[RMDB]
RNA sequence: GGGAACGACUCGAGUAGAGUCGAAAAUGUACGUCCGCGCAAAUGGAAUGUCAAUUUGUUCUCCAGAUUCAAAUCAAUCCGAACAGGCAUUGGAGAACAACAAACAGAAGCGACUUUACCGUGCCAACUGGACCAUAACUUUCGAGUUAUGGUCCAGAAAAGAAACAACAACAACAAC
Reactivity to DMS in 0.01 (KOAc 150mM, MgCl2 10mM, bicine 150mM(pH8.5), 24C), signal-to-noise 2, nucleotides 027 to 126: u000g000u000a070c020g010u000c010c050g020c020g000c300a040a180a140u010g010g000a110a050u020g000u080c210a060a060u010u000u030g000u000u000c000u000c000c010a020g000a090u090u000c150a060a060a050u000c240a120a030u030c100c110g010a070a090c230a140g020g000c280a140u020u000g000g010a010g000a000a000c010a000a000c300a050a110a020c070a040g000a200a110g010c030g010a010c020u040u000u000a060c000c000g040u010g000c010c020a160a190
Reactivity to 2A3 in 0.01 (KOAc 150mM, MgCl2 10mM, bicine 150mM(pH8.5), 24C), signal-to-noise 5, nucleotides 027 to 126: u070g010u030a020c050g020u000c000c000g010c020g000c090a020a050a150u120g020g090a080a050u060g060u070c020a060a080u040u000u010g010u000u020c000u000c010c000a020g080a190u170u120c090a110a070a210u050c030a010a080u060c040c040g070a150a080c030a150g060g010c070a040u020u110g000g000a000g010a000a000c000a000a000c010a000a250a010c010a020g130a100a030g020c010g020a010c000u010u000u000a020c000c030g010u050g030c030c010a030a060

The data come from the RNA Mapping Database (RMDB), library OK1LIB. This 177-nucleotide RNA was probed chemically with DMS and 2A3. Conditions: 150 mM KOAc, 10 mM MgCl2 and 150 mM bicine (pH 8.5), 24 C. High 2A3 reactivity points to a flexible backbone, as in loops and unpaired stretches.